[RMDB]
RNA sequence: GGGAACGACUCGAGUAGAGUCGAAAAAGUUUGGUAUCAACGACGAUGAUUAUCGUUCGACAUGGCUAUCAGGACUCACCAACUCCGCUCCUUACCUUUGCUGUGCCCUUAUCGGUUGCUGGCUUACUGUUCCAUUCAACCACGUAUUCGGCCGCCAGGACUAGCAUCACUUCGGUGAUGCUAGUCCAAAAGAAACAACAACAACAAC
Reactivity to 2A3 in 0.01 (KOAc 150mM, MgCl2 10mM, bicine 150mM(pH8.5), 24C), signal-to-noise 1, nucleotides 027 to 156: a000g170u120u100u010g050g010u110a110u140c060a070a140c120g020a000c090g010a040u060g120a090u220u250a090u110c090g050u140u120c030g050a010c120a170u060g060g010c020u060a050u090c050a020g060g070a010c000u000c080a060c010c010a030a060c000u070c040c010g050c090u010c000c000u000u060a050c010c000u000u190u050g010c040u010g110u140g040c000c000c020u050u140a110u160c050g040g000u020u040g000c090u000g010g010c010u000u150a020c040u040g020u090u030c060c040a080u130u150c000a010a000c040c040a080c010g000u030a080u070u100c020g060g140c110c040g040c010c060a040
Chemical mapping of a 207-nucleotide RNA with 2A3. 2A3 is a SHAPE reagent: it acylates the 2'-hydroxyl of flexible nucleotides of all four kinds. Conditions: 150 mM KOAc, 10 mM MgCl2 and 150 mM bicine (pH 8.5), 24 C. 2A3 adducts were read by reverse transcription with SuperScript II with manganese. For 2A3, 396 sequencing reads were counted.